[RMDB]
RNA sequence: GGGAACGACUCGAGUAGAGUCGAAAAGUGCAACGAUCACCAAAGAUAAGGUCUACUUCAUCAAAAUGAAGAGAGGGUGUGCGUUCACUUAUGACCUAUCUCUCCACAACCUUACCCGGCUGAUCGACUAAAUGGGGACUUUCGAGUCCCCAUUUAGAAAAGAAACAACAACAACAAC
Reactivity to 2A3 in 0.01 (KOAc 150mM, MgCl2 10mM, bicine 150mM(pH8.5), 24C), signal-to-noise 3, nucleotides 027 to 126: g100u070g060c040a110a060c030g000a020u030c010a000c020c030a100a040a030g070a050u080a030a060g100g040u050c040u120a170c000u070u000c000a080u000c020a070a150a190a200u050g020a030a000g060a000g020a020g060g010g000u050g020u040g100c120g070u100u060c000a010c060u130u130a240u300g000a010c000c000u030a040u100c060u030c010u050c030c020a090c020a080a020c010c000u020u070a040c000c000c030g000g060c080u040g010a020u030c000g040a040
Reactivity to DMS in 0.01 (KOAc 150mM, MgCl2 10mM, bicine 150mM(pH8.5), 24C), signal-to-noise 3, nucleotides 027 to 126: g030u000g010c160a020a140c000g000a080u010c000a030c020c010a070a160a190g020a060u010a040a080g000g000u000c020u000a300c010u000u000c020a000u020c250a100a070a150a130u000g000a030a010g000a160g020a020g000g000g000u000g010u010g020c150g020u010u010c010a060c190u020u020a080u000g020a030c010c010u000a060u010c050u000c020u010c030c080a090c190a110a020c010c000u000u000a060c020c020c150g030g000c240u000g020a030u000c070g010a300